Structure probing data (DMS and 2A3) for a 207-nucleotide construct. For DMS the reverse transcriptase was MarathonRT. The DMS profile rests on 8,575 reads. The RNA was probed in 150 mM KOAc, 10 mM MgCl2 and 150 mM bicine (pH 8.5) at 24 C. Values cover nucleotides 27 to 156. For 2A3 the reverse transcriptase was SuperScript II with manganese.

RNA sequence: GGGAACGACUCGAGUAGAGUCGAAAAAACGUCAUCUUAGUGGGGAACGUCUUAAGGCUGUCGCGACCUUAAGUUGUACAAUUGUGACUAGCUGAUCUUAAAACCCGUUGCUAGGUGUUAGGUAAAGCGAAAUUCUAAAGUAGCAACUACGCUCGUACUCCAACAUAUAGUUCGCUAUAUGUUGGAGAAAAGAAACAACAACAACAAC
Reactivity to DMS in 0.01 (KOAc 150mM, MgCl2 10mM, bicine 150mM(pH8.5), 24C), signal-to-noise 3, nucleotides 027 to 156: a040a070c110g000u000c020a060u010c080u010u000a120g010u000g020g020g060g020a150a060c050g000u000c020u000u000a030a030g010g010c000u000g020u000c150g050c000g010a060c000c000u010u010a010a010g010u000u010g020u000a090c070a070a110u010u000g020u010g040a030c010u000a130g020c030u000g000a280u000c020u000u000a030a050a050a060c000c000c030g010u000u000g000c040u000a070g030g040u000g010u000u000a030g020g000u000a060a170a050g020c000g020a090a070a120u000u010c160u010a050a050a090g010u000a080g010c020a040a040c030u000a130c130g000c020u000c030g020u000a190
Reactivity to 2A3 in 0.01 (KOAc 150mM, MgCl2 10mM, bicine 150mM(pH8.5), 24C), signal-to-noise 9, nucleotides 027 to 156: a000a010c070g070u080c020a130u030c050u110u110a070g020u130g030g010g000g020a030a030c010g020u000c010u010u020a010a010g020g010c030u080g080u110c040g000c030g030a100c000c000u010u010a020a020g010u040u090g050u060a080c100a080a090u090u100g030u010g020a010c000u010a010g000c010u010g020a060u080c010u020u050a030a040a030a050c010c010c040g010u010u020g000c000u000a000g000g020u010g020u020u020a020g000g020u030a070a050a000g010c010g040a010a020a040u230u100c120u170a050a010a030g020u010a020g000c000a030a010c010u070a050c090g050c060u050c040g020u040a040